[RMDB]
RNA sequence: GGGAACGACUCGAGUAGAGUCGAAAAGAUAUGGACUCGCACCAGAGUAUGUGGGUCGGAAACGACCCACAACAAGUACGACGAAGGUGACGAGUCCUAAGUCAAAACUACAAGUUCGCUUGUAGAAGUCUUAUUAUCUCUUCGGAGAUAAUAAGACAAAAGAAACAACAACAACAAC
Reactivity to 2A3 in 0.01 (KOAc 150mM, MgCl2 10mM, bicine 150mM(pH8.5), 24C), signal-to-noise 5, nucleotides 027 to 126: g000a010u010a000u060g000g000a000c010u000c010g000c000a000c000c020a010g020a020g090u040a090u180g010u000g030g000g010u010c020g000g000a000a010a000c000g000a000c010c010c030a000c000a000a010c000a000a020g220u080a010c070g300a040c020g020a120a010g020g010u020g150a140c000g010a000g000u000c000c000u000a000a000g000u010c000a000a010a080a160c000u010a000c000a000a010g020u030u130c230g120c200u010u010g000u000a020g050a150a020
Reactivity to DMS in 0.01 (KOAc 150mM, MgCl2 10mM, bicine 150mM(pH8.5), 24C), signal-to-noise 4, nucleotides 027 to 126: g000a020u000a030u000g000g000a020c000u000c000g010c000a010c010c000a030g010a060g010u000a070u010g050u000g000g010g010u000c000g010g000a000a010a020c000g010a020c000c000c000a000c000a020a050c300a120a170g030u010a010c030g000a210c260g010a130a110g000g000u000g000a160c020g010a010g010u000c000c000u000a000a070g000u000c000a100a070a120a220c010u000a010c000a010a010g000u000u030c290g010c000u010u000g010u000a010g000a150a160